[RMDB]
RNA sequence: GGGAACGACUCGAGUAGAGUCGAAAAAUCGUCGCGUGUGCAGUCGUGCUGACGAACGAGGGCAAGCAGGCCCUGCAAAGAGAGGGGCAAGAGGCGAUCGAGAAGCAGAUCAUCAACCACGCAAAGGCCCUCAUAACUAUUUCGAUAGUUAUGAGGGAAAAGAAACAACAACAACAAC
Reactivity to DMS in 0.01 (KOAc 150mM, MgCl2 10mM, bicine 150mM(pH8.5), 24C), signal-to-noise 7, nucleotides 027 to 126: a080u000c030g030u000c070g010c040g030u000g010u000g040c120a070g010u010c060g010u000g000c020u000g010a080c040g010a090a080c110g000a040g000g010g020c040a110a090g030c120a130g010g010c010c010c010u000g000c100a070a090a110g000a090g000a120g000g000g010g010c050a060a070g010a110g000g010c050g020a070u010c030g000a070g010a080a080g000c050a080g000a040u000c050a060u000c080a070a100c070c040a040c070g010c090a070a080a140g000g010
Reactivity to 2A3 in 0.01 (KOAc 150mM, MgCl2 10mM, bicine 150mM(pH8.5), 24C), signal-to-noise 5, nucleotides 027 to 126: a000u070c030g060u030c030g000c010g020u060g030u060g050c070a030g060u070c040g090u060g050c040u060g030a030c020g010a030a000c030g030a050g000g070g020c040a080a040g030c020a040g130g000c020c000c000u020g030c050a040a170a000g100a010g020a020g010g010g010g010c020a030a020g040a020g070g020c030g020a040u010c030g010a040g010a110a020g010c030a010g000a060u040c010a000u030c000a030a040c030c010a030c030g020c030a060a020a040g100g010